[RMDB]
RNA sequence: GGGAACGACUCGAGUAGAGUCGAAAAGAUAUGGAGCUCGUAACUUUUGACGUAAUCUGACUUAGCUGUAGUCGGAAACGACUAUACAGCUAAGUCAGAUUACGAUAAGUUGCGAGCUCCUAAGUCACCAAGUAGCUAUGUUCGCAUAGCUACUUGGAAAAGAAACAACAACAACAAC
Reactivity to DMS in 0.01 (KOAc 150mM, MgCl2 10mM, bicine 150mM(pH8.5), 24C), signal-to-noise 2, nucleotides 027 to 126: g010a050u000a300u000g020g000a010g020c000u010c000g030u000a000a000c010u000u000u000u000g010a240c110g000u000a000a000u000c000u000g010a020c000u000u010a000g000c000u000g010u010a040g000u010c010g010g000a060a070a230c020g050a030c010u020a120u010a130c010a010g000c000u000a000a000g000u000c000a000g000a000u000u000a000c000g000a040u000a000a000g010u000u000g010c000g000a020g020c000u000c000c000u000a000a060g010u000c020a260